[RMDB]
RNA sequence: GGGAACGACUCGAGUAGAGUCGAAAAUAACCGAGCACACUGAGUUCCAUCAACUUAUCUCAAGAGCUCAAUCGGCUGCGAAUUGACGGGUCAGUGCGGUCGCCAGUCGGUACUCCUGCCUUGCCAGUGACCCUGGAUGAUUCGUCAUCCAGGGUCAAAAAGAAACAACAACAACAAC
Reactivity to 2A3 in 0.01 (KOAc 150mM, MgCl2 10mM, bicine 150mM(pH8.5), 24C), signal-to-noise 3, nucleotides 027 to 126: u100a050a040c050c030g000a010g000c030a020c000a000c000u010g010a010g030u130u010c060c000a100u100c070a100a140c030u180u170a110u180c020u000c040a050a030g000a000g060c000u000c040a000a070u010c020g010g000c020u060g030c040g030a070a070u040u130g090a060c040g000g040g020u030c050a010g100u080g080c060g040g030u010c000g020c010c000a000g010u000c000g000g020u020a020c010u000c010c010u010g000c010c000u050u090g050c040c000a090g020
Reactivity to DMS in 0.01 (KOAc 150mM, MgCl2 10mM, bicine 150mM(pH8.5), 24C), signal-to-noise 2, nucleotides 027 to 126: u040a200a150c180c040g080a090g000c040a190c040a030c000u040g000a080g010u030u000c030c150a130u040c140a030a040c040u060u150a030u050c030u010c020a080a020g000a000g010c000u000c000a100a180u010c080g060g050c000u000g020c050g000a100a120u050u000g000a060c180g000g050g020u000c110a060g000u080g010c050g000g030u010c040g000c010c040a030g040u020c000g000g000u000a030c110u000c080c020u030g030c030c020u000u000g000c000c050a060g030